[RMDB]
RNA sequence: GGGAACGACUCGAGUAGAGUCGAAAAUCUUCAGACGUGACACUUUAUAAUAAAGCCAAAGCUCAGAAAAAUCAGAAAAACAAGCAAAGUGAGAUUUAGGAAAGAGUUGAUAUGAUAUCUAAUUUUGGACUAUUGUCCCCUUAACGUUUAAAGGUUACCGUACUAAUGAGUUCGCUCAUUAGUACGGAAAAGAAACAACAACAACAAC
Reactivity to 2A3 in 0.01 (KOAc 150mM, MgCl2 10mM, bicine 150mM(pH8.5), 24C), signal-to-noise 5, nucleotides 027 to 156: u010c010u060u050c040a030g010a070c040g020u030g050a020c020a040c060u130u120u180a130u090a170a080u140a090a120a000g010c010c010a020a000a020g010c030u050c070a010g110a090a110a010a010a020u080c040a010g180a090a140a040a020a030c040a080a000g080c070a110a070a050g030u080g010a070g000a060u050u110u190a060g010g030a050a070a030g030a010g040u040u030g020a040u030a080u120g040a020u020a030u090c050u050a060a130u030u060u050u100g010g000a010c010u060a120u140u170g030u040c010c010c000c010u050u110a070a020c020g020u060u050u090a030a140a000g020g010u040u060a020
Reactivity to DMS in 0.01 (KOAc 150mM, MgCl2 10mM, bicine 150mM(pH8.5), 24C), signal-to-noise 1, nucleotides 027 to 156: u000c010u000u010c020a060g040a050c010g040u000g010a180c050a100c020u000u000u000a100u010a090a130u000a010a050a110g020c050c020a050a090a110g060c040u010c050a100g000a030a050a110a140a070u000c010a100g000a070a100a080a090a070c090a030a070g000c090a060a040a140g040u000g010a080g010a080u000u000u000a090g010g010a090a080a110g010a140g010u010u000g020a110u000a070u000g000a070u000a080u000c040u040a040a110u000u000u000u010g020g010a200c090u000a060u000u000g000u000c020c000c020c050u000u010a070a050c040g000u000u020u000a050a040a030g030g040u000u000a180
This 207-nucleotide RNA was probed chemically with 2A3 and DMS. For 2A3, 2,711 sequencing reads were counted. For DMS the reverse transcriptase was MarathonRT. Reactivities are given for positions 27 through 156. The reactions ran in a buffer of 150 mM KOAc, 10 mM MgCl2 and 150 mM bicine (pH 8.5), at 24 C. It was measured as part of the RMDB library OK3TST.